[RMDB]
RNA sequence: GGGAACGACUCGAGUAGAGUCGAAAAUUAGCAGCUACGCUCUUCUAACCCGGGCUGGCAGGGUUAGAAGGGUGUCAUAAUGAGCCAGCUGCCCCUUCCGACUCCCCUAAGGAAGGGAAAGAUGUAGGGGAUAGGUGCUUACAGAAUCCUGCGGGAGCAUCUCACACAUGUUCGCAUGUGUGAGAUGAAAAGAAACAACAACAACAAC
Reactivity to DMS in 0.01 (KOAc 150mM, MgCl2 10mM, bicine 150mM(pH8.5), 24C), signal-to-noise 1, nucleotides 027 to 156: u030u010a080g050c040a050g000c030u010a190c110g000c000u010c000u000u010c010u000a020a050c000c010c040g010g210g000c010u000g010g050c040a140g020g010g070u030u010a020g000a020a030g040g010g010u000g020u000c040a150u000a080a170u010g010a200g060c050c010a040g010c030u000g040c040c000c000c010u020u040c000c000g000a130c030u000c030c000c010c010u020a300a300g000g000a090a040g000g010g000a030a050a220g020a090u000g010u000a090g030g040g070g010a070u010a090g000g050u000g000c030u010u010a140c090a150g010a060a090u000c010c040u000g040c040g080g030g000a140g040
Reactivity to 2A3 in 0.01 (KOAc 150mM, MgCl2 10mM, bicine 150mM(pH8.5), 24C), signal-to-noise 2, nucleotides 027 to 156: u150u050a040g050c060a030g010c040u110a060c060g000c000u010c000u000u000c000u000a000a000c000c000c020g030g030g010c020u000g010g000c030a020g000g000g020u010u000a000g010a000a010g010g000g000u010g020u000c000a030u130a260a160u180g080a020g010c000c010a000g000c000u000g000c000c000c000c010u000u000c000c000g010a000c030u040c020c010c000c000u000a010a000g000g000a000a000g000g000g030a000a000a010g060a030u170g090u170a000g010g010g000g000a000u000a000g040g000u040g010c010u080u060a070c020a090g070a070a030u060c010c030u030g000c170g020g010g000a040g060
The data come from the RNA Mapping Database (RMDB), library ARCHII. Structure probing data (DMS and 2A3) for a 207-nucleotide construct. For 2A3 the reverse transcriptase was SuperScript II with manganese. DMS adducts were read by reverse transcription with MarathonRT. The reactions ran in a buffer of 150 mM KOAc, 10 mM MgCl2 and 150 mM bicine (pH 8.5), at 24 C. For 2A3, 2,030 sequencing reads were counted. Values cover nucleotides 27 to 156.